[RMDB]
The data come from the RNA Mapping Database (RMDB), library TTRDEL.
Structure probing data (2A3 and DMS) for a 177-nucleotide construct.
For 2A3, 4,398 sequencing reads were counted.
2A3 adducts were read by reverse transcription with SuperScript II with manganese.
The reactions ran in a buffer of 150 mM KOAc, 10 mM MgCl2 and 150 mM bicine (pH 8.5), at 24 C.

RNA sequence: GGGAACGACUCGAGUAGAGUCGAAAAGAUAUGGACCUCGCGAUAAGUUCCGUUCGGAAACGAACGAAGAACUUUUGACGCGACGUCCUAAGUCAAACCUUUAGUCGUGUUCGCACGACUAAAGGAACCUGGCAUAUACGUUCGCGUAUAUGCCAGGAAAAGAAACAACAACAACAAC
Reactivity to 2A3 in 0.01 (KOAc 150mM, MgCl2 10mM, bicine 150mM(pH8.5), 24C), signal-to-noise 1, nucleotides 027 to 126: g010a010u070a030u110g000g000a000c000c030u000c000g000c010g020a080u060a300a030g000u000u000c010c010g020u000u000c030g020g020a040a040a020c030g020a000a000c000g010a160a080g020a000a030c000u060u040u100u100g070a020c010g020c000g010a000c010g020u010c000c010u000a050a000g030u020c040a070a050a220c000c000u000u000u000a000g000u000c020g000u020g040u070u110c300g020c070a010c000g000a000c000u020a000a000a000g000g000a010a000
Reactivity to DMS in 0.01 (KOAc 150mM, MgCl2 10mM, bicine 150mM(pH8.5), 24C), signal-to-noise 2, nucleotides 027 to 126: g000a060u000a200u010g000g000a010c000c110u000c000g000c000g010a090u010a020a020g020u010u000c000c000g020u010u000c000g020g010a020a020a090c000g020a000a010c010g010a090a100g010a000a000c010u000u000u000u000g010a260c020g000c000g010a000c180g010u000c010c000u000a020a080g010u000c000a120a080a160c000c000u000u000u000a010g010u000c000g040u010g010u000u020c200g060c000a000c000g000a010c000u030a000a000a010g000g000a010a020